[RMDB]
RNA sequence: GGGAACGACUCGAGUAGAGUCGAAAAGAACAAAAUAGGGCCGUCAUGGUCAGCAGCCAACCGCUGAACCAAAGAUAACAAUCUAAGUCAAAAGGCAACACGCGAACGGCCAAUCGCGUUAUAGGAACAUAUCCACGGAGUUCGCUCCGUGGAUAUGAAAAGAAACAACAACAACAAC
Reactivity to DMS in 0.01 (KOAc 150mM, MgCl2 10mM, bicine 150mM(pH8.5), 24C), signal-to-noise 3, nucleotides 027 to 126: g050a170a130c160a060a030a030a100u040a130g000g000g010c010c010g000u000c130a170u000g000g030u020c010a040g000c000a090g000c090c160a090a100c150c090g000c020u000g010a070a050c010c000a000a160a090g000a010u000a070a200c270a040a090u000c070u010a090a110g020u010c090a090a050a080a100g010g000c020a050a040c150a030c020g000c000g000a020a030c040g000g000c020c050a060a120u010c020g000c010g000u010u020a090u000a120g020g000a120a250
Reactivity to 2A3 in 0.01 (KOAc 150mM, MgCl2 10mM, bicine 150mM(pH8.5), 24C), signal-to-noise 2, nucleotides 027 to 126: g020a030a020c080a050a020a080a070u180a060g000g010g000c010c000g000u050c020a080u070g000g000u000c000a000g030c000a000g060c090c080a020a090c050c080g040c000u020g000a080a060c000c000a010a030a010g050a080u110a030a110c080a050a040u050c100u250a060a040g050u130c050a000a170a000a000g080g060c020a010a010c000a000c070g010c000g010a060a050c020g100g000c000c000a000a050u010c020g000c010g000u030u040a140u110a070g110g040a160a040